[RMDB]
RNA sequence: GGGAACGACUCGAGUAGAGUCGAAAACCUGCCUGUAAUCCUUGAGAUUUGGUCAAGGAGCAUCCACCCCCGAACCUAAUGCGGGGUACCAGGAGAAAAAACCGCUUACUUCUUCGGAAGUAAGCGGCCGUUAUAUCGAGUUCGCUCGAUAUAACGGAAAAGAAACAACAACAACAAC
Reactivity to DMS in 0.01 (KOAc 150mM, MgCl2 10mM, bicine 150mM(pH8.5), 24C), signal-to-noise 1, nucleotides 027 to 126: c000c000u000g000c000c000u000g010u000a050a140u000c000c000u000u000g000a020g000a030u000u000u000g000g000u000c000a030a000g000g000a020g030c050a090u000c230c150a170c030c000c010c020c020g000a060a210c010c010u000a030a020u000g010c000g010g000g000g010u010a050c300c030a020g000g010a180g020a000a090a080a090a110a260c010c000g000c000u000u000a000c000u000u000c000u000u000c190g000g000a030a000g020u000a000a010g010c000g000g020
Reactivity to 2A3 in 0.01 (KOAc 150mM, MgCl2 10mM, bicine 150mM(pH8.5), 24C), signal-to-noise 1, nucleotides 027 to 126: c020c000u030g020c000c000u040g050u150a040a030u030c000c000u010u020g030a020g000a070u100u140u220g040g000u010c000a010a000g000g000a000g010c000a190u050c030c020a000c000c000c000c000c000g010a010a010c020c050u110a060a000u060g020c000g000g000g000g010u000a000c010c010a000g000g090a000g100a030a150a010a010a010a020c010c000g020c000u020u010a010c010u010u020c000u030u030c130g160g000a000a010g000u000a000a000g000c010g000g000
The data come from the RNA Mapping Database (RMDB), library RFMREP. An RNA of 177 nucleotides, treated with DMS and 2A3 and read out base by base. For 2A3 the reverse transcriptase was SuperScript II with manganese. Values are in units of 0.01, from 0 to 300, in steps of 10. For DMS, 1,070 sequencing reads were counted.